[RMDB]
RNA sequence: GGGAACGACUCGAGUAGAGUCGAAAACAGUGGUCAUUAGGUGUCUGGUUACUCGCCAGGGGAAUACAAGGUAACUGGAUCUUCCAUUGAAAAAGUGGGAUUACCAUGACCUCAGUGGAUCCAUGCUGGCAAUUUAACUUGCUAAAAAUUUAGCACACCCGUCAGACUAAUUCGUUAGUCUGACGGGAAAAGAAACAACAACAACAAC
Reactivity to 2A3 in 0.01 (KOAc 150mM, MgCl2 10mM, bicine 150mM(pH8.5), 24C), signal-to-noise 2, nucleotides 027 to 156: c020a020g020u040g020g050u040c000a000u050u290a120g020g000u030g000u060c030u040g020g040u020u030a030c050u040c150g040c040c080a030g000g030g040g060a040a110u150a110c080a090a020g020g030u040a080a000c020u000g000g000a030u060c010u040u020c040c000a010u060u120g030a140a060a040a080a010g020u020g010g090g010a050u050u080a060c000c000a000u000g030a050c010c000u000c030a020g030u070g070g030a040u000c020c040a040u200g040c100u080g040g000c000a000a010u040u100u080a090a050c040u070u030g000c000u060a050a050a030a050a140u150u170u100a020g000c000a000c010a030